Conditions: 150 mM KOAc, 10 mM MgCl2 and 150 mM bicine (pH 8.5), 24 C. Chemical mapping of a 177-nucleotide RNA with DMS. For DMS the reverse transcriptase was MarathonRT.

RNA sequence: GGGAACGACUCGAGUAGAGUCGAAAAGAUAUGGAACUAUCCGAGCAAGACCCACCUAUGAAGUCGGAAACGAUGGAGGUGCUUGCUCAGUAGUUCCUAAGUCAAAACUGUAUGUUCGCAUACAGAACACUUAAACUGCGUUCGCGCAGUUUAAGUGAAAAGAAACAACAACAACAAC
Reactivity to DMS in 0.01 (KOAc 150mM, MgCl2 10mM, bicine 150mM(pH8.5), 24C), signal-to-noise 2, nucleotides 027 to 126: g000a040u010a300u000g000g030a020a030c000u010a000u020c050c080g010a000g010c000a000a000g000a240c200c260c040a040c010c040u000a180u000g000a090a180g010u020c000g000g000a150a060a220c010g010a000u000g010g010a000g010g010u010g000c000u000u000g000c010u000c000a030g000u000a010g010u000u000c000c010u000a010a080g070u020c090a070a070a060a180c010u010g000u000a000u000g010u000u020c300g020c000a000u000a000c010a020g030a100a120